About this RNA
This 177-nucleotide RNA was probed chemically with DMS and 2A3. For DMS, 1,798 sequencing reads were counted. 2A3 adducts were read by reverse transcription with SuperScript II with manganese. The RNA was probed in 150 mM KOAc, 10 mM MgCl2 and 150 mM bicine (pH 8.5) at 24 C. For 2A3, 560 sequencing reads were counted.
RNA sequence: GGGAACGACUCGAGUAGAGUCGAAAAUUGAUAGUAUGGGAUAUAAGUCCUUUUCUCUGACACGCUCUCUGUUGUUAACCGGCGGCGGUUUCUCGAAUCCACCAUCUCAGUUCGAAGAGAGUAUGCCGACAGGCCAGAGUUUCGACUCUGGCCUGUCAAAAGAAACAACAACAACAAC
Reactivity to DMS in 0.01 (KOAc 150mM, MgCl2 10mM, bicine 150mM(pH8.5), 24C), signal-to-noise 1, nucleotides 027 to 126: u030u040g000a090u040a110g010u010a060u000g000g010g010a050u010a090u020a110a140g000u000c000c000u000u000u010u030c010u000c040u020g010a100c040a020c090g020c000u000c000u000c060u000g040u020u010g000u000u010a070a070c010c120g000g010c120g010g010c020g000g000u030u030u000c010u000c130g010a060a050u000c010c000a040c010c080a020u000c030u000c030a080g010u000u000c120g010a030a050g000a030g020a070g000u000a070u040g020c090c040
Reactivity to 2A3 in 0.01 (KOAc 150mM, MgCl2 10mM, bicine 150mM(pH8.5), 24C), signal-to-noise 1, nucleotides 027 to 126: u000u120g050a010u050a070g050u160a230u200g000g000g000a010u030a000u020a300a020g080u080c000c000u000u050u110u040c040u000c010u030g050a030c040a010c140g000c000u000c000u010c020u050g000u130u060g000u000u070a060a150c000c000g080g000c000g030g010c000g000g110u010u010u000c070u030c000g000a000a050u030c010c010a010c040c020a140u060c010u040c080a030g010u080u090c010g070a100a000g000a050g000a010g060u010a050u120g180c020c020